[RMDB]
RNA sequence: GGGAACGACUCGAGUAGAGUCGAAAAGGGGUGGUGAUGGUGAUCUCGGGAGGCGUGUUGUCCACGUUCACCAGCGCAGAGUACGAGGCCUCUAUGCCAUAUCCAUCGCGUACCACGAACUGCACCGGUUCACCCUUCACUUCGGUGAAGGGUGAACAAAAGAAACAACAACAACAAC
Reactivity to DMS in 0.01 (KOAc 150mM, MgCl2 10mM, bicine 150mM(pH8.5), 24C), signal-to-noise 2, nucleotides 027 to 126: g010g000g060g000u000g000g000u000g010a050u020g000g020u000g000a070u000c140u020c120g000g000g000a240g000g010c010g090u020g000u000u000g020u010c160c030a130c040g010u000u000c050a080c100c030a120g000c070g000c030a140g000a070g020u020a080c050g010a120g030g030c160c080u000c020u000a100u010g000c030c100a090u010a050u000c020c020a050u000c020g030c070g020u000a120c030c020a050c140g010a040a120c000u010g000c090a050c070c070g000
Reactivity to 2A3 in 0.01 (KOAc 150mM, MgCl2 10mM, bicine 150mM(pH8.5), 24C), signal-to-noise 1, nucleotides 027 to 126: g000g000g010g000u050g040g040u040g000a000u020g000g000u060g080a090u030c070u090c220g040g000g010a020g000g010c040g000u020g000u050u140g050u000c040c010a010c020g000u000u080c090a010c030c030a020g060c120g000c070a020g020a020g090u080a070c040g010a030g020g020c040c000u000c100u100a110u080g010c010c000a030u010a070u120c010c010a070u040c040g000c010g230u120a050c010c040a010c130g050a070a000c030u060g030c030a030c010c040g030